[RMDB]
RNA sequence: GGGAACGACUCGAGUAGAGUCGAAAAUACCAGUUCGCUGGUAAAAAAAACCUUUGUGUAGCGCAGAGUAUGGGAGCGUCCCACACCCAUUGGGUGUGAAGGACGCGAGGAUCAUACGAUCGCUACACUCUGGUAAAAACCCCUCUUCGGAGGGGAAUUAGCUAUCUCUAUUCGUAGAGAUAGCUAAAAAAGAAACAACAACAACAAC
Reactivity to 2A3 in 0.01 (KOAc 150mM, MgCl2 10mM, bicine 150mM(pH8.5), 24C), signal-to-noise 2, nucleotides 027 to 156: u030a010c000c000a000g020u070u100c260g030c110u060g000g000u120a160a000a000a020a000a000a050a070c000c000u020u000u000g010u000g000u000a000g010c020g030c220a020g040a000g060u000a000u020g000g010g010a010g010c000g000u000c010c000c000a000c000a000c010c020c110a300u200u300g020g020g010u030g000u010g050a130a100g000g000a000c000g020c000g010a020g000g010a010u000c000a000u010a010c010g020a060u020c000g000c010u000a000c000a000c010u000c000u000g000g000u070a070a030a010a000a040c000c020c040c000u000c000u010u030c180g130g000a000g010g010g010g040a000a010
Reactivity to DMS in 0.01 (KOAc 150mM, MgCl2 10mM, bicine 150mM(pH8.5), 24C), signal-to-noise 1, nucleotides 027 to 156: u010a110c010c000a200g060u000u010c200g070c000u000g010g000u000a020a010a000a050a080a130a110a030c000c000u000u000u020g030u000g050u000a000g030c010g060c100a060g000a300g030u070a030u010g010g030g030a130g040c040g020u000c010c010c000a000c000a040c050c000c000a300u020u000g020g020g040u000g000u000g060a040a160g050g020a020c000g050c010g010a010g070g010a040u010c000a020u000a000c000g010a180u000c010g030c020u000a020c020a000c010u000c010u000g000g020u000a040a040a090a080a090c000c010c000c010u000c000u000u000c270g020g000a030g020g020g030g000a000a010
Annotation:
Chemical mapping of a 207-nucleotide RNA with 2A3 and DMS. 2A3 adducts were read by reverse transcription with SuperScript II with manganese. For 2A3, 2,026 sequencing reads were counted. DMS adducts were read by reverse transcription with MarathonRT. The reactions ran in a buffer of 150 mM KOAc, 10 mM MgCl2 and 150 mM bicine (pH 8.5), at 24 C.